Structure probing data (DMS and 2A3) for a 207-nucleotide construct. The 2A3 profile rests on 3,703 reads. The RNA was probed in 150 mM KOAc, 10 mM MgCl2 and 150 mM bicine (pH 8.5) at 24 C.
RNA sequence: GGGAACGACUCGAGUAGAGUCGAAAACCUCACUACAUUUUACUGUUCCUAAAGAAUGUGUGACAGGUACAGUAAAACGUAUUGCAAGGUUUAUCAGUUCCUAUAAACAGGUAAAUAACAAUAUAUGAAAAGCAAAGACUGUUCGCAGUCUUUGCAAGCAGGUAUAAUUGUUCGCAAUUAUACCUGCAAAAGAAACAACAACAACAAC
Reactivity to DMS in 0.01 (KOAc 150mM, MgCl2 10mM, bicine 150mM(pH8.5), 24C), signal-to-noise 1, nucleotides 027 to 156: c000c000u000c040a110c040u000a020c000a020u000u000u010u020a040c010u000g000u000u000c010c010u000a210a100a130g010a190a100u020g030u010g020u020g020a180c160a070g040g040u000a040c020a020g040u020a010a000a020a000c000g010u000a020u000u000g070c100a150a060g020g020u000u000u000a150u020c090a150g020u010u000c040c150u000a120u020a040a070a110c120a090g010g020u000a040a070a050u000a070a200c040a080a060u000a160u010a100u000g000a110a050a130a160g000c010a010a000a020g020a030c010u000g000u000u010c300g000c020a000g020u000c000u000u000u000g020c000a010a000
Reactivity to 2A3 in 0.01 (KOAc 150mM, MgCl2 10mM, bicine 150mM(pH8.5), 24C), signal-to-noise 5, nucleotides 027 to 156: c000c000u000c000a020c000u010a000c000a040u010u000u000u000a000c000u010g000u040u060c010c000u070a100a120a040g160a180a290u260g110u080g020u040g170a110c120a080g000g000u010a000c000a000g000u000a000a000a000a000c000g000u000a000u000u040g010c080a110a010g040g000u010u010u030a150u090c040a020g010u020u020c000c000u060a090u150a100a080a010c050a010g080g070u060a070a100a090u200a120a040c030a160a040u150a030u070a060u240g100a080a110a010a020g000c000a000a000a000g010a000c000u010g010u020u030c150g010c110a000g000u000c000u000u010u000g000c000a000a000

Values are in units of 0.01, from 0 to 300, in steps of 10.